RNA sequence: GGGAACGACUCGAGUAGAGUCGAAAAGAUAUGGACGAGGAUGUGCGAGCGAUGAAAUCGGAAACGAUGGAGCUCCCAUCUCGUCCUAAGUCAAACGUUCCAACAAGGUUCGCCUUGUUGGAACGAACAUUACCACACGCUUCGGCGUGUGGUAAUGAAAAGAAACAACAACAACAAC
Reactivity to DMS in 0.01 (KOAc 150mM, MgCl2 10mM, bicine 150mM(pH8.5), 24C), signal-to-noise 2, nucleotides 027 to 126: g010a020u010a300u000g000g000a000c000g010a060g010g020a030u000g020u000g040c160g050a020g010c000g010a100u000g010a070a070a020u010c010g010g010a140a110a140c010g000a020u000g010g000a060g010c000u000c000c000c000a030u010c000u010c010g010u010c000c000u000a010a090g000u000c050a090a110a240c040g010u000u000c000c000a010a000c000a010a010g000g010u000u020c250g000c000c000u000u000g000u000u000g000g010a000a010c010g000a040a080
Reactivity to 2A3 in 0.01 (KOAc 150mM, MgCl2 10mM, bicine 150mM(pH8.5), 24C), signal-to-noise 2, nucleotides 027 to 126: g060a020u110a060u150g000g020a000c010g000a030g300g060a080u020g170u230g170c270g030a010g050c010g190a300u050g090a080a000a010u020c000g000g050a080a030a070c030g000a000u020g050g000a010g000c010u000c010c000c010a020u000c000u000c000g000u000c000c000u010a020a000g010u030c050a080a050a090c020g000u000u000c010c000a010a020c000a000a020g100g040u130u180c300g130c060c000u010u010g000u000u050g000g000a000a000c000g000a000a000